[RMDB]
RNA sequence: GGGAACGACUCGAGUAGAGUCGAAAAGAUAUGGACGAUGCGGAUACAUCCCACAGAGCUAUGAAGCCACUGGGUCGGAAACGACCUUGGUGGAGCUCGUGGGAUGUAUCCGCAUCGUCCUAAGUCACGAUUGAAAUAAGUUCGCUUAUUUCAAUCGAAAAGAAACAACAACAACAAC
Reactivity to DMS in 0.01 (KOAc 150mM, MgCl2 10mM, bicine 150mM(pH8.5), 24C), signal-to-noise 1, nucleotides 027 to 126: g000a050u000a300u010g000g010a010c020g030a000u000g000c010g000g000a030u000a010c000a010u000c000c000c000a020c000a150g060a020g040c010u000a260u000g000a180a270g000c020c000a010c300u010g000g010g020u010c000g020g000a090a100a240c000g020a020c000c010u010u010g000g010u010g000g000a020g030c000u000c010g030u000g020g000g000a000u010g000u010a010u000c000c000g000c040a010u000c000g000u000c010c000u000a010a070g010u000c100a280